RNA sequence: GGGAACGACUCGAGUAGAGUCGAAAAUUGGUGGUGUAGGGGUAAAAUCCGUAGAUAUCACCAAGAAUACCCAUUGCGAAGGCGAUCUGCUGGAACUCAACUGACGCUAAGGCGCGAAAGCGUGGGGAUUGGGUUAAAAAUUCGUUUUUAACCCAAUAAAAGAAACAACAACAACAAC
Reactivity to DMS in 0.01 (KOAc 150mM, MgCl2 10mM, bicine 150mM(pH8.5), 24C), signal-to-noise 9, nucleotides 027 to 126: u000u000g010g020u000g000g010u000g010u000a080g010g010g010g000u000a090a090a140a140u060c010c000g000u020a120g010a030u010a000u000c000a000c000c000a000a010g000a120a120u020a110c010c010c000a150u030u020g010c070g000a180a130g010g000c020g000a070u010c050u010g010c040u000g010g010a130a100c120u010c090a080a080c090u010g000a080c050g000c020u010a090a120g010g000c020g010c010g000a070a060a110g000c040g020u000g000g000g000g000
Reactivity to 2A3 in 0.01 (KOAc 150mM, MgCl2 10mM, bicine 150mM(pH8.5), 24C), signal-to-noise 9, nucleotides 027 to 126: u010u000g000g000u010g000g000u010g010u030a050g000g010g010g020u030a010a020a010a040u040c010c010g080u160a030g040a060u030a000u020c000a000c000c000a000a000g010a010a030u190a100c010c000c010a040u060u230g040c050g050a090a040g060g000c020g060a170u030c030u090g020c020u040g040g070a070a050c030u020c090a040a070c060u080g030a020c020g010c030u070a070a080g060g000c020g000c020g060a070a040a010g020c030g010u020g000g010g000g010